[RMDB]
RNA sequence: GGGAACGACUCGAGUAGAGUCGAAAAAAGACGCAGCCUGCUAGCUCCACUUUCGCCCUCGCGGCCUGAGUAGAGACCAACUAGCCGUCAGCCUGGGAGUUCCUCCGGCCCAGGAUCUGGCGUCGACAGGAGGAUCACCGUCCCACCCGGUCGCGGGACUUACGUACCAGUUCGCUGGUACGUAAGUAAAAGAAACAACAACAACAAC
Reactivity to 2A3 in 0.01 (KOAc 150mM, MgCl2 10mM, bicine 150mM(pH8.5), 24C), signal-to-noise 2, nucleotides 027 to 156: a000a000g050a010c020g000c000a030g060c010c010u020g020c000u000a030g010c000u000c000c000a010c030u020u020u090c030g020c000c000c020u210c190g040c210g010g030c020c000u010g000a000g000u030a010g010a000g010a040c030c060a100a060c020u030a010g000c020c040g020u010c010a010g030c000c010u000g000g000g000a010g000u050u070c010c000u000c000c010g000g000c000c000c000a010g000g020a010u130c070u070g010g000c000g020u050c000g030a050c070a130g000g000a000g010g020a000u040c030a000c000c070g050u050c030c000c000a050c020c010c010g060g050u090c130g020c050g140g020g050
An RNA of 207 nucleotides, treated with 2A3 and read out base by base.
For 2A3 the reverse transcriptase was SuperScript II with manganese.
It was measured as part of the RMDB library ARCHII.
Conditions: 150 mM KOAc, 10 mM MgCl2 and 150 mM bicine (pH 8.5), 24 C.